[RMDB]
RNA sequence: GGGAACGACUCGAGUAGAGUCGAAAAGCCGUCGUACGCGACGGCAGUCGGUCGUGAGACCGACAGUUCAACGUGAGUUGAACAACGUACCGGUGACGGUACGAACGCUAGCGUGAGCUAGCGAGCGCCACUACGGUGGCGCAGGGAUGCUUACUUAGUCAUCUGGUUGGCAAACCUCCGCGGACCUUCGGGACCAAUGGAGAGGAACCCAGCCGAGAAGCAUCGAGCCGGUAAAUGUUUACCGGCUCUGACACCAACUGGUGAAUAACGACGUGUUCGCACGUCGUAAAAGAAACAACAACAACAAC
Reactivity to 2A3 in 0.01 (KOAc 150mM, MgCl2 10mM, bicine 150mM(pH8.5), 24C), signal-to-noise 4, nucleotides 027 to 266: g000c000c000g000u000c010g010u040a030c300g000c010g100a000c020g000g000c000a000g000u000c000g010g010u010c010g010u040g110a090g000a040c000c000g000a000c000a010g000u000u000c010a000a010c020g120u130g160a130g030u000u000g000a000a000c020a010a040c020g010u000a000c000c000g020g030u050g010a020c000g000g000u010a000c000g020a130a010c020g000c000u010a000g010c010g050u080g060a020g000c010u000a000g000c000g000a040g000c000g000c000c000a030c000u030a050c220g120g010u010g010g000c000g000c000a010g030g090g000a000u010g000c000u020u030a300c010u090u140a040g040u040c000a040u020c080u050g010g010u010u010g000g000c050a140a220a140c010c000u000c010c000g020c060g040g060a150c020c000u090u140c230g070g020g050a090c020c020a060a080u230g020g020a100g020a120g020g000a000a000c000c000c000a000g000c000c000g000a000g000a010a000g000c000a010u020c020g000a000g000c010c000g000g000u040a060a070a080u300g090u110u040u020a000c000c000g020g000c000u010c010u020g010a010c000a000c000c020a130a290c160u290g080g060u120g130a160a070u230a100
Reactivity to DMS in 0.01 (KOAc 150mM, MgCl2 10mM, bicine 150mM(pH8.5), 24C), signal-to-noise 4, nucleotides 027 to 266: g000c000c000g030u000c000g010u010a100c180g040c010g000a010c000g000g010c020a010g010u010c000g010g010u000c000g010u030g010a220g010a020c000c000g010a010c010a040g010u000u010c000a010a020c000g000u030g010a240g030u010u000g000a020a000c000a190a260c020g000u000a000c000c000g000g000u010g010a080c000g010g000u000a000c000g000a110a170c020g010c000u010a000g000c000g000u020g000a190g010c000u010a000g000c000g000a090g010c000g010c000c000a000c030u010a140c190g040g030u010g010g020c010g030c000a030g000g010g010a030u010g010c000u000u000a130c060u000u000a140g000u020c070a040u000c030u010g020g000u000u010g010g010c120a040a200a250c030c000u000c000c020g020c300g000g010a100c000c000u000u040c150g010g020g010a060c000c010a060a300u020g010g000a030g020a060g000g010a210a180c300c000c000a030g000c010c000g010a040g000a020a030g000c000a010u000c020g000a010g010c010c000g000g000u000a010a050a210u030g010u010u000u000a000c000c010g000g010c000u000c000u000g010a140c050a040c030c040a230a130c180u010g020g030u000g000a110a070u010a130